[RMDB]
RNA sequence: GGGAACGACUCGAGUAGAGUCGAAAAGAAAAUAAAGCCCGAUGCUUAAAAACAGUACAAGCUUUAGACCUUGAUGGUUUAGUAAUUAUUGGCGGUGAUGGUUCGAAUACAGCAACGGCUAUCCUAGUCUUAAUAUGGGAUUCGUCCCAUAUUAAGAAAAAGAAACAACAACAACAAC
Reactivity to DMS in 0.01 (KOAc 150mM, MgCl2 10mM, bicine 150mM(pH8.5), 24C), signal-to-noise 4, nucleotides 027 to 126: g010a130a090a140a130u000a120a150a150g000c040c060c060g010a240u010g010c030u010u010a050a130a220a140a080c030a040g000u000a090c120a110a140g030c060u000u000u010a020g000a040c040c000u010u000g010a100u010g010g000u000u010u000a040g010u010a050a040u000u000a080u000u000g000g010c030g010g030u010g010a040u010g010g000u010u000c080g010a070a060u010a060c180a040g030c040a040a190c300g010g010c020u010a070u000c000c010u000a120g010
Reactivity to 2A3 in 0.01 (KOAc 150mM, MgCl2 10mM, bicine 150mM(pH8.5), 24C), signal-to-noise 3, nucleotides 027 to 126: g010a000a060a020a040u120a080a170a000g060c000c060c000g020a050u110g020c020u110u070a090a180a070a180a050c030a040g020u100a060c010a080a090g020c000u150u180u060a040g030a060c010c000u060u210g080a100u180g060g020u030u050u010a010g020u040a140a060u150u100a070u110u090g050g040c070g010g040u070g030a070u050g050g050u050u110c010g020a020a020u080a080c040a020g000c010a020a020c040g010g000c010u000a000u010c000c010u030a030g040
Source: RMDB library OK2TST, as collected in RNAgym. Structure probing data (DMS and 2A3) for a 177-nucleotide construct. Reactivities are given for positions 27 through 126. For DMS the reverse transcriptase was MarathonRT.